RNA sequence: GGGAACGACUCGAGUAGAGUCGAAAAGAGGAGUCAUUCGUGACUCCUCAAAGGGAGCUCAACUCUCCCGCUCAAGUCCGAGAGCCUUCGCACCCAAAAGAAUGCUGUUCCUGUUCGCAGGAACAAACCUGUAAGUGUCAUUCGUGACACUUACAGGAAAAGAAACAACAACAACAAC
Reactivity to DMS in 0.01 (KOAc 150mM, MgCl2 10mM, bicine 150mM(pH8.5), 24C), signal-to-noise 3, nucleotides 027 to 126: g010a020g010g000a010g020u010c000a030u000u010c200g000u000g000a000c000u000c000c000u000c010a000a040a050g000g010g020a020g020c170u000c260a100a140c220u020c000u000c000c010c000g000c060u000c050a060a120g030u000c000c020g000a120g000a070g000c040c060u000u000c070g020c100a150c020c010c000a050a080a110a070g000a100a070u010g000c160u000g020u000u000c000c000u010g000u000u010c170g010c040a020g000g000a020a010c010a010a040a140
Reactivity to 2A3 in 0.01 (KOAc 150mM, MgCl2 10mM, bicine 150mM(pH8.5), 24C), signal-to-noise 3, nucleotides 027 to 126: g000a000g010g000a000g000u020c030a020u100u120c160g070u090g010a000c000u000c020c000u000c000a000a000a000g000g010g000a010g020c020u050c190a020a070c050u030c000u000c030c010c010g000c010u030c030a080a030g060u000c060c030g050a040g000a010g110c000c010u030u040c010g020c020a100c030c000c000a040a080a020a000g110a090a060u160g060c060u050g050u020u020c000c000u020g030u030u060c250g010c080a000g000g000a010a010c000a010a020a010

An RNA of 177 nucleotides, treated with DMS and 2A3 and read out base by base. 2A3 adducts were read by reverse transcription with SuperScript II with manganese.